[RMDB]
RNA sequence: GGGAACGACUCGAGUAGAGUCGAAAAGAUAUGGAGACAGCGAUAAGAACCAGUCGGAAACGACUGAGUUCUUUUGACGCUGACUCCUAAGUCAAAACUCUGUUUCAAGUUCGCUUGAAACAGAGAAGGACAUGUAUAGGUUCGCCUAUACAUGUCCAAAAGAAACAACAACAACAAC
Reactivity to 2A3 in 0.01 (KOAc 150mM, MgCl2 10mM, bicine 150mM(pH8.5), 24C), signal-to-noise 2, nucleotides 027 to 126: g000a000u030a020u050g010g010a000g010a030c000a000g000c010g040a040u080a300a030g000a000a000c010c000a000g000u000c010g000g030a040a020a010c000g000a010c010u000g000a000g010u000u000c010u020u000u020u020g000a000c000g000c000u000g000a020c000u000c000c000u000a030a010g010u000c000a010a020a100a220c000u000c000u000g000u010u010u010c000a010a010g000u030u110c210g110c140u000u010g000a000a010a010c000a000g000a000g000a000a050
Reactivity to DMS in 0.01 (KOAc 150mM, MgCl2 10mM, bicine 150mM(pH8.5), 24C), signal-to-noise 3, nucleotides 027 to 126: g020a020u000a090u010g000g000a020g010a230c010a000g010c010g000a080u020a010a020g020a020a020c000c010a020g000u010c010g010g010a010a020a070c000g010a010c000u000g000a050g000u000u000c000u000u000u000u010g000a270c050g010c000u000g000a050c000u010c000c000u000a010a060g000u000c010a120a090a090a180c010u000c000u000g000u000u000u000c000a010a020g000u000u010c240g020c000u020u000g000a000a010a000c000a000g000a000g010a050a060